The record gives the reactivity of an RNA of 177 nucleotides to 2A3 and DMS. For DMS, 8,258 sequencing reads were counted. DMS adducts were read by reverse transcription with MarathonRT.
RNA sequence: GGGAACGACUCGAGUAGAGUCGAAAAUUCGUGGAGGGACGCCUGAUCGUGGUCUUCGGGUCGGCGGGCGAGCGGGACAGGACGAAGCGGCCGAUGCAGGGGCGGGUGGCCUCGCGCUGGGCGGAGGCGACCCGCUCCAGUUCGCUGGAGCGGGUCGAAAAGAAACAACAACAACAAC
Reactivity to 2A3 in 0.01 (KOAc 150mM, MgCl2 10mM, bicine 150mM(pH8.5), 24C), signal-to-noise 2, nucleotides 027 to 126: u100u040c040g020u060g010g090a130g020g000g040a020c010g010c030c050u130g060a160u120c070g110u130g030g000u030c030u060u060c080g030g010g040u050c020g030g010c040g000g000g000c040g000a030g030c040g020g010g020a050c040a090g050g080a040c040g020a060a030g040c050g040g020c030c030g050a050u120g000c040a020g000g000g000g050c060g010g040g030u100g060g020c020c000u000c020g050c030g000c030u090g030g140g000c030g020g010a030g050g020
Reactivity to DMS in 0.01 (KOAc 150mM, MgCl2 10mM, bicine 150mM(pH8.5), 24C), signal-to-noise 4, nucleotides 027 to 126: u000u010c080g010u000g000g020a140g010g010g010a120c080g020c040c030u000g000a070u000c060g010u010g000g000u000c050u010u010c060g010g010g000u000c040g010g000c050g000g010g020c050g010a090g010c090g010g000g010a120c110a070g010g010a080c070g010a080a100g020c060g010g000c060c030g000a090u000g010c080a130g010g000g000g020c050g020g000g010u010g000g010c030c010u010c020g010c040g020c090u010g000g010g020c050g020g010a020g010g010